The record gives the reactivity of an RNA of 177 nucleotides to 2A3 and DMS. Source: RMDB libraries RFM100 and RFMREP, as collected in RNAgym. Values cover nucleotides 27 to 126. 2A3 adducts were read by reverse transcription with SuperScript II with manganese.

RNA sequence: GGGAACGACUCGAGUAGAGUCGAAAACGAGGAUAGCUACCGCCCGCAGGGAUAGUAAAUAUCCGUGACCAGUGGCCUCGGUGGCUGCGUCUCCCGGAGCAAUGGGACCCGCAAGGCUGCCCUGGUCCGGGGCAAUAAAUUUCGAUUUAUUGCCCCGAAAAGAAACAACAACAACAAC
Reactivity to 2A3 in 0.01 (KOAc 150mM, MgCl2 10mM, bicine 150mM(pH8.5), 24C), signal-to-noise 8, nucleotides 027 to 126: c050g030a080g040g020a050u030a080g020c020u040a040c020c030g070c030c010c030g070c080a110g000g060g020a020u020a020g100u110a050a160a150u040a010u020c010c030g030u030g020a040c010c010a030g030u090g180g000c000c030u030c030g000g010u010g040g000c020u030g000c010g010u000c020u010c030c020c010g050g070a240g080c110a130a130u190g000g000g010a010c020c020c010g000c030a050a030g060g000c010u030g010c020c010c000u000g000g000u000c000
Reactivity to DMS in 0.01 (KOAc 150mM, MgCl2 10mM, bicine 150mM(pH8.5), 24C), signal-to-noise 7, nucleotides 027 to 126: c090g010a100g000g000a050u000a060g010c050u000a030c010c040g010c080c020c050g010c190a090g020g020g000a030u000a010g000u020a070a090a120u000a010u000c000c000g010u020g010a110c020c020a050g030u030g000g010c020c050u010c180g000g010u000g000g010c000u000g010c050g000u010c190u000c000c000c010g000g020a160g020c190a140a080u040g020g000g000a050c150c120c060g020c040a060a100g010g010c030u010g000c040c040c030u000g000g010u010c020